[RMDB]
RNA sequence: GGGAACGACUCGAGUAGAGUCGAAAACCAGGCGUAUGGUCAGGACAGUGCAUGCCCAGCCCUGGGUCCUGAGAAAGGAGGUGCCGCCACCCUGUGUGCAGCUCAGCAAAGGAGGUCAGUCUAGCUCAUGAGAGGUGCGUGGCUGUGUGGGAGGUGGUCAUACCCAAAGGUUCGCCUUUGGGUAUGAAAAAGAAACAACAACAACAAC
Reactivity to 2A3 in 0.01 (KOAc 150mM, MgCl2 10mM, bicine 150mM(pH8.5), 24C), signal-to-noise 3, nucleotides 027 to 156: c010c010a010g030g000c060g070u130a160u190g020g010u020c030a000g040g050a090c060a100g060u080g070c060a120u110g030c010c020c040a020g000c030c000c000u030g020g020g000u040c010c010u050g040a070g110a110a080a040g040g000a030g050g040u050g010c020c000g020c040c000a040c010c040c030u080g030u040g040u070g110c030a040g020c010u040c120a070g030c090a090a070a040g080g020a050g010g060u070c060a020g020u030c040u090a040g010c030u050c080a060u110g100a030g020a040g090g000u000g050c070g010u040g000g030c010u020g020u000g010u020g010g000g000a030g010g040u060g030g000
Reactivity to DMS in 0.01 (KOAc 150mM, MgCl2 10mM, bicine 150mM(pH8.5), 24C), signal-to-noise 1, nucleotides 027 to 156: c020c000a040g000g000c100g060u010a020u010g030g020u000c000a090g040g010a010c050a080g000u000g040c070a170u000g000c000c020c010a170g020c020c020c020u010g000g010g010u000c040c000u000g010a130g010a080a100a020g030g000a090g010g010u000g030c010c020g020c010c030a070c010c020c030u020g000u020g020u000g000c080a050g000c000u000c060a140g010c030a070a080a130g010g010a100g010g000u000c030a110g010u000c070u000a110g030c000u000c040a120u000g000a080g030a080g020g010u010g000c090g010u010g050g010c020u000g020u000g000u010g000g000g010a060g030g020u000g020g000
An RNA of 207 nucleotides, treated with 2A3 and DMS and read out base by base. The RNA was probed in 150 mM KOAc, 10 mM MgCl2 and 150 mM bicine (pH 8.5) at 24 C. The 2A3 profile rests on 2,104 reads. For 2A3 the reverse transcriptase was SuperScript II with manganese. Reactivities are given for positions 27 through 156.